[RMDB]
RNA sequence: GGGAACGACUCGAGUAGAGUCGAAAAGGGUUGUUGUUCGCAACAACCCAAACAAGCUCAUGAUGACGCAAACAACGGCGUCGCCGUGAGCAAACGGCGAAAAAACACGACCCUUCGGGGUCGUGAACACUCAUCAUCUCUUCGGAGAUGAUGAGUGAAAAGAAACAACAACAACAAC
Reactivity to 2A3 in 0.01 (KOAc 150mM, MgCl2 10mM, bicine 150mM(pH8.5), 24C), signal-to-noise 1, nucleotides 027 to 126: g040g010g010u000u000g000u010u000g010u010u030c020g000c010a000a000c000a000a000c010c000c020a000a000a000c000a010a020g000c000u000c000a000u020g020a030u020g010a000c000g000c030a060a240a250c040a190a090c200g100g010c010g000u000c000g000c000c020g000u000g000a000g000c020a000a020a010c020g130g010c050g050a040a050a030a030a090a000c000a000c000g000a000c000c000c000u000u060c180g050g000g000g000u000c000g000u000g020a000a000
Reactivity to DMS in 0.01 (KOAc 150mM, MgCl2 10mM, bicine 150mM(pH8.5), 24C), signal-to-noise 2, nucleotides 027 to 126: g000g000g010u000u000g010u000u000g020u000u000c200g000c000a010a020c010a000a000c030c000c010a000a020a030c160a240a160g000c010u010c020a000u010g000a040u000g000a030c000g020c020a090a070a140c230a090a140c200g000g000c000g000u010c010g010c040c000g030u000g000a020g030c020a000a030a040c070g030g000c110g000a080a060a120a110a070a120c020a010c000g000a060c000c000c000u000u000c190g000g000g030g010u000c000g000u000g030a030a070
Structure probing data (2A3 and DMS) for a 177-nucleotide construct. The RNA was probed in 150 mM KOAc, 10 mM MgCl2 and 150 mM bicine (pH 8.5) at 24 C. Source: RMDB library M2PK50, as collected in RNAgym.